[RMDB]
RNA sequence: GGGAACGACUCGAGUAGAGUCGAAAAAUAUACAAUGAGACGCAAUACCGCGAGGUGGAGCAAAUCUAUAAAAUAUGUCCCAGUUCGGAUUGUUCUCUGCAACUCGAGAGCAUGAAGCCGGAAUCGCGCGGUAGUCUUAUUUCGAUAAGACUACCGCAAAAGAAACAACAACAACAAC
Reactivity to 2A3 in 0.01 (KOAc 150mM, MgCl2 10mM, bicine 150mM(pH8.5), 24C), signal-to-noise 2, nucleotides 027 to 126: a000u130a010u020a050c080a030a090u140g000a020g010a020c080g000c000a010a000u000a030c000c020g010c060g110a080g000g040u000g000g000a020g000c000a040a110a000u000c000u020a040u080a110a130a000a000u080a010u070g070u040c010c000c000a000g080u000u070c020g000g020a060u010u010g030u000u000c000u020c010u010g100c050a060a030c050u070c090g000a000g000a020g060c020a040u050g210a030a020g030c010c000g010g050a060a100u240c100g050c030
Reactivity to DMS in 0.01 (KOAc 150mM, MgCl2 10mM, bicine 150mM(pH8.5), 24C), signal-to-noise 3, nucleotides 027 to 126: a010u000a020u020a090c210a250a130u060g030a060g000a300c300g020c020a020a270u070a000c060c000g000c170g000a190g040g010u000g000g010a300g000c040a060a110a130u000c010u000a080u010a140a140a040a080u020a020u020g000u010c000c000c000a200g000u020u040c000g040g000a110u010u010g000u000u000c000u020c010u010g030c200a020a110c300u040c200g000a000g000a000g000c010a020u020g000a160a070g000c020c040g000g040a010a140u030c170g020c180
Structure probing data (2A3 and DMS) for a 177-nucleotide construct. DMS adducts were read by reverse transcription with MarathonRT.